[RMDB]
RNA sequence: GGGAACGACUCGAGUAGAGUCGAAAAACCCGGCGCCAAGACGUGCGCGCAAGGGCGGGCGCCCGCGGGCGAGCAGCGUGACGCAGCGACGGCCCGCCCGGGCUUCCGGGGCAUCACCCGGUCGGCGGUACACUAUGAACUUCGGUUCAUAGUGUACAAAAGAAACAACAACAACAAC
Reactivity to 2A3 in 0.01 (KOAc 150mM, MgCl2 10mM, bicine 150mM(pH8.5), 24C), signal-to-noise 5, nucleotides 027 to 126: a000c000c000c000g020g010c000g000c010c020a120a030g260a170c080g100u130g070c040g000c000g000c050a100a140g010g000g000c000g010g000g000c020g050c020c110c020g000c020g030g180g000c020g030a110g050c070a030g140c060g170u140g060a060c010g000c030a020g000c010g030a040c000g140g040c000c000c000g000c000c010c000g010g020g000c000u040u020c000c000g000g000g000g000c020a160u130c050a120c020c000c000g000g020u070c080g020g030c060g010
Reactivity to DMS in 0.01 (KOAc 150mM, MgCl2 10mM, bicine 150mM(pH8.5), 24C), signal-to-noise 4, nucleotides 027 to 126: a060c000c000c000g000g000c110g020c000c030a110a110g010a190c160g020u050g000c060g020c040g020c090a120a100g000g000g020c000g000g010g000c030g000c100c000c040g000c010g020g000g000c000g010a300g010c050a090g000c130g010u020g010a170c050g000c020a120g000c010g000a120c140g000g020c000c020c010g010c000c000c010g000g000g010c030u010u010c000c000g020g030g030g000c200a110u030c230a160c000c000c000g000g000u000c090g000g010c060g000